[RMDB]
RNA sequence: GGGAACGACUCGAGUAGAGUCGAAAAACGGAUACCUUACGAGGUAUCAGAAUGACUUCGUGGUAGAGCGCCACGAACGGAAAAUAAAGAAAGCUCGAUUGAAACGCACCGUGUACGCACGGUGCGAAAAAGUCGAUCCAGUUCGCUGGAUCGACAACUAGAUGAUGGGGUUCGCCCCAUCAUCUAGAAAAGAAACAACAACAACAAC
Reactivity to 2A3 in 0.01 (KOAc 150mM, MgCl2 10mM, bicine 150mM(pH8.5), 24C), signal-to-noise 1, nucleotides 027 to 156: a000c080g020g000a010u030a020c000c000u000u030a030c250g100a030g030g000u020a000u020c000a000g060a050a180u140g030a040c070u000u000c040g020u000g020g020u010a130g030a000g000c000g000c020c000a000c010g000a000a000c010g080g030a050a030a050a040u150a060a020a000g180a130a000a000g000c020u010c020g100a110u010u230g080a160a070a000c000g000c030a030c020c010g050u060g060u140a050c200g000c030a000c020g000g040u000g040c030g000a050a000a000a000a000g000u000c000g000a000u020c000c000a000g000u040u090c180g050c200u000g010g000a000u000c010g000a000c000a000a000